About this RNA:
Chemical mapping of a 177-nucleotide RNA with 2A3 and DMS. The DMS profile rests on 2,390 reads. The RNA was probed in 150 mM KOAc, 10 mM MgCl2 and 150 mM bicine (pH 8.5) at 24 C. For 2A3 the reverse transcriptase was SuperScript II with manganese.
RNA sequence: GGGAACGACUCGAGUAGAGUCGAAAACUUACAACACCGGGUUCUAGGGUCCACCCGUACGCUCGACCACCCACCACGCGGCCAGGGACCGCUUGUGCGUUCGGGUCCCAGUGCCCACCACCCAAAAGGGUUUAAUAUUCUUCGGAAUAUUAAACCCAAAAGAAACAACAACAACAAC
Reactivity to 2A3 in 0.01 (KOAc 150mM, MgCl2 10mM, bicine 150mM(pH8.5), 24C), signal-to-noise 4, nucleotides 027 to 126: c020u110u160a070c050a210a060c040a140c090c040g030g000g000u030u010c030u170a250g050g080g000u060c080c060a030c000c020c000g010u020a020c010g030c040u070c030g050a040c010c040a030c030c000c010a020c010c000a050c070g060c040g010g000c050c070a140g000g010g070a090c010c010g010c050u030u100g040u030g030c010g030u010u040c010g010g000g020u000c000c000c000a020g010u040g010c000c000c000a020c010c000a030c000c000c010a050a060a020a060
Reactivity to DMS in 0.01 (KOAc 150mM, MgCl2 10mM, bicine 150mM(pH8.5), 24C), signal-to-noise 2, nucleotides 027 to 126: c150u030u010a120c290a050a120c190a080c090c030g040g030g030u010u030c000u020a090g010g000g000u100c140c190a040c000c000c010g000u010a000c000g000c040u020c030g000a110c140c040a110c040c000c030a050c030c010a050c160g030c080g010g040c030c020a100g000g030g000a090c000c030g000c090u010u010g020u000g000c030g030u030u000c010g000g000g040u010c030c000c000a050g000u010g010c000c000c010a090c120c130a070c020c000c020a030a100a140a030